This 177-nucleotide RNA was probed chemically with DMS and 2A3.
DMS adducts were read by reverse transcription with MarathonRT.
Conditions: 150 mM KOAc, 10 mM MgCl2 and 150 mM bicine (pH 8.5), 24 C.
2A3 adducts were read by reverse transcription with SuperScript II with manganese.
RNA sequence: GGGAACGACUCGAGUAGAGUCGAAAAGAAAGAGAUGAGAAAUCAAGAAUGAAGCAAGACAUUGAUUGAUAUGGUUGUUUUCGGUGCAUGUUUGAUUACUAAAAGUUGGGGCAUUCGAUGGUUUACAUGGAAUAAACUGUUUCGACAGUUUAUUCCAAAAAGAAACAACAACAACAAC
Reactivity to DMS in 0.01 (KOAc 150mM, MgCl2 10mM, bicine 150mM(pH8.5), 24C), signal-to-noise 6, nucleotides 027 to 126: g010a050a080a050g000a060g020a090u020g000a090g000a050a050a040u010c050a040a040g000a060a110u020g010a070a060g010c080a050a060g000a060c050a040u010u010g010a090u000u000g000a040u000a070u010g000g010u000u000g000u000u000u010u010c050g010g020u010g010c050a050u010g000u000u010u010g000a110u010u010a080c080u020a040a060a050a070g010u010u000g010g000g000g000c050a040u010u010c030g010a080u010g000g000u000u000u020a060c140a130
Reactivity to 2A3 in 0.01 (KOAc 150mM, MgCl2 10mM, bicine 150mM(pH8.5), 24C), signal-to-noise 4, nucleotides 027 to 126: g050a000a050a000g050a000g000a060u130g020a010g050a060a060a030u020c020a020a020g050a040a060u120g020a050a020g080c020a000a000g060a080c020a050u010u040g080a070u030u040g000a030u040a040u130g080g000u000u030g010u060u000u030u010c010g010g010u020g000c040a040u070g080u060u060u060g120a100u060u100a040c020u050a060a050a000a030g040u050u040g030g000g000g030c040a030u010u020c020g060a050u040g040g050u060u010u030a060c060a130